Overview:
Structure probing data (2A3 and DMS) for a 177-nucleotide construct. For DMS the reverse transcriptase was MarathonRT. For 2A3, 1,767 sequencing reads were counted. Source: RMDB library OK2TST, as collected in RNAgym. The DMS profile rests on 1,382 reads. The reactions ran in a buffer of 150 mM KOAc, 10 mM MgCl2 and 150 mM bicine (pH 8.5), at 24 C.
[RMDB]
RNA sequence: GGGAACGACUCGAGUAGAGUCGAAAAGAGCGCCGCGCCAUGGUCCGCAGCCUCAUGGAAGAUUGCCGGCGGGGCGACACCCCGUACUUCUUCCAGGUAGCCGCACAAUCCUGCCGUUCUAUGGAGGCCCUCACCUGUAUUUCGAUACAGGUGAGGGAAAAGAAACAACAACAACAAC
Reactivity to 2A3 in 0.01 (KOAc 150mM, MgCl2 10mM, bicine 150mM(pH8.5), 24C), signal-to-noise 2, nucleotides 027 to 126: g000a000g020c000g000c010c000g070c000g040c010c000a080u070g000g000u050c040c070g000c020a010g000c020c000u000c020a060u050g030g010a020a060g020a070u070u130g150c120c050g090g010c010g000g000g000g020c030g030a020c020a090c080c010c010c000g030u010a050c040u000u030c000u020u010c010c000a020g040g020u040a020g020c040c050g040c050a030c020a060a160u100c000c010u030g090c000c010g040u100u030c030u090a130u120g040g040a020g070g000
Reactivity to DMS in 0.01 (KOAc 150mM, MgCl2 10mM, bicine 150mM(pH8.5), 24C), signal-to-noise 2, nucleotides 027 to 126: g020a070g000c060g010c020c050g010c000g020c020c030a080u010g000g000u000c070c120g030c050a050g010c050c020u010c040a100u000g020g020a030a000g030a060u000u000g010c170c150g010g030c000g000g010g000g020c060g010a110c220a300c030c000c000c040g020u000a080c050u000u000c010u000u000c010c000a050g010g030u000a060g000c010c050g030c020a060c080a060a110u010c040c010u000g000c030c030g010u000u020c060u000a090u020g000g000a200g010g010